[RMDB]
RNA sequence: GGGAACGACUCGAGUAGAGUCGAAAACAUCAUCCCUUCGGGGAUGAUGAAAGAUCGAAAGAUCAGGCUUACCGUAAUAAGCCAAAAUAGGAGCGAAACGCAAAAGACCUGUGUUCGCACAGGUCAACCUACAACGUAUGUUCGCAUACGUUGUAGGAAAAGAAACAACAACAACAAC
Reactivity to DMS in 0.01 (KOAc 150mM, MgCl2 10mM, bicine 150mM(pH8.5), 24C), signal-to-noise 5, nucleotides 027 to 126: c010a010u000c010a000u000c000c000c000u000u010c210g050g010g000g010a010u000g030a000u010g010a050a100a110g000a020u000c000g000a140a100a140g000a010u000c010a120g000g000c000u000u000a060c120c130g020u000a100a220u000a010a010g010c000c000a060a030a070a100u010a080g000g000a100g010c040g000a050a060a070c110g020c110a060a070a090a070g000a020c000c000u000g000u000g010u000u020c220g000c000a000c000a000g000g010u000c000a010a040
Reactivity to 2A3 in 0.01 (KOAc 150mM, MgCl2 10mM, bicine 150mM(pH8.5), 24C), signal-to-noise 5, nucleotides 027 to 126: c000a000u010c000a000u010c000c000c000u000u050c180g070g000g000g000a000u000g000a000u000g000a000a010a010g000a000u020c020g040a060a030a030g000a010u020c020a010g000g000c000u020u010a030c030c070g070u040a060a100u050a080a020g000c020c000a040a020a020a020u230a070g060g030a070g020c060g100a220a120a040c100g000c060a040a050a020a060g000a000c000c000u000g000u010g030u010u070c220g030c070a010c000a000g000g000u000c000a000a010

Chemical mapping of a 177-nucleotide RNA with DMS and 2A3. DMS adducts were read by reverse transcription with MarathonRT.